Structure probing data (DMS) for a 177-nucleotide construct. Reactivities are given for positions 27 through 126.
[RMDB]
RNA sequence: GGGAACGACUCGAGUAGAGUCGAAAAGGGAUGGUUUGAAACCUUCGCAAAGGCGUAUUCUUUAUGCAAUGAAGCAAUUAAACCUCACUCCUGGUGCGAAGCAUCGUAAAUGCGCUAAAAUUUGCGGCGUAUCCAGUUGCUUCGGCAACUGGAUACGAAAAGAAACAACAACAACAAC
Reactivity to DMS in 0.01 (KOAc 150mM, MgCl2 10mM, bicine 150mM(pH8.5), 24C), signal-to-noise 1, nucleotides 027 to 126: g010g010g010a060u020g030g000u020u000u040g000a110a040a300c300c000u000u000c010g000c120a070a100a120g000g030c130g000u030a000u040u000c180u000u010u000a050u020g000c020a080a040u020g000a010a060g000c050a050a170u000u000a020a060a060c010c000u000c070a080c040u040c010c030u010g020g010u000g020c060g000a090a210g030c030a000u000c020g010u000a010a010a050u000g010c020g010c070u000a010a070a100a110u000u000u000g000c000g030g000